[RMDB]
RNA sequence: GGGAACGACUCGAGUAGAGUCGAAAACCGAGCAGGCGUCUCGUGGAGGAGGUUGCGUCGCGGGCGGAGGGCGGGGGCACGCUCCUCGCGCCAGCACUGAGGCUCGUAUCGAGGCUCGGCCCCCAGACGUAUCAUUGGCAUUCGUGCCAAUGAUACGAAAAGAAACAACAACAACAAC
Reactivity to DMS in 0.01 (KOAc 150mM, MgCl2 10mM, bicine 150mM(pH8.5), 24C), signal-to-noise 2, nucleotides 027 to 126: c020c010g010a120g030c020a110g020g020c050g000u010c060u010c110g020u010g000g010a090g000g010a050g000g020u000u000g040c080g030u010c140g030c060g000g010g000c120g000g010a080g010g020g000c050g000g010g000g030g010c090a050c050g000c030u010c000c000u000c010g020c030g010c010c040a080g030c050a090c030u010g000a100g020g000c010u000c030g000u000a160u020c130g000a010g000g000c020u000c010g000g000c020c020c000c030c040a130g000a140
Reactivity to 2A3 in 0.01 (KOAc 150mM, MgCl2 10mM, bicine 150mM(pH8.5), 24C), signal-to-noise 3, nucleotides 027 to 126: c020c010g020a050g020c040a020g030g060c000g060u080c010u060c110g110u230g070g030a090g000g040a000g020g030u190u200g030c030g070u160c090g020c030g010g020g050c120g020g010a050g030g030g050c130g020g000g000g030g050c090a020c120g010c000u060c000c010u010c020g050c000g000c020c000a020g030c030a030c030u070g010a010g040g000c010u000c010g040u140a150u230c080g000a010g020g040c010u000c010g030g000c010c000c020c020c000a060g020a080
An RNA of 177 nucleotides, treated with DMS and 2A3 and read out base by base.
2A3 adducts were read by reverse transcription with SuperScript II with manganese.
It was measured as part of the RMDB library OK2TST.
For 2A3, 3,142 sequencing reads were counted.
The reactions ran in a buffer of 150 mM KOAc, 10 mM MgCl2 and 150 mM bicine (pH 8.5), at 24 C.